[RMDB]
RNA sequence: GGGAACGACUCGAGUAGAGUCGAAAAGAAACACCAGCGCCCAGGAAGAAAAACAUGAAGGUGAACUACUUGACGAAACACGAACGCUGGUGUAAAUCGUCAAGAAGGAGAAAGAAAAGAAAGAAAAAUCCAUGAUGGGAUUCGUCCCAUCAUGGAUAAAAGAAACAACAACAACAAC
Reactivity to DMS in 0.01 (KOAc 150mM, MgCl2 10mM, bicine 150mM(pH8.5), 24C), signal-to-noise 2, nucleotides 027 to 126: g000a120a120a130c030a020c050c030a020g000c020g000c030c000c030a150g060g000a120a080g010a030a060a080a130a110c130a040u000g010a150a070g000g030u000g000a090a050c080u000a090c000u000u000g030a020c010g000a070a110a060c130a080c100g010a070a060c060g080c030u080g020g000u000g000u010a000a060a120u000c000g040u010c010a000a000g020a080a060g000g000a010g000a050a020a120g030a060a060a080a040g000a080a020a160g000a000a090a050a110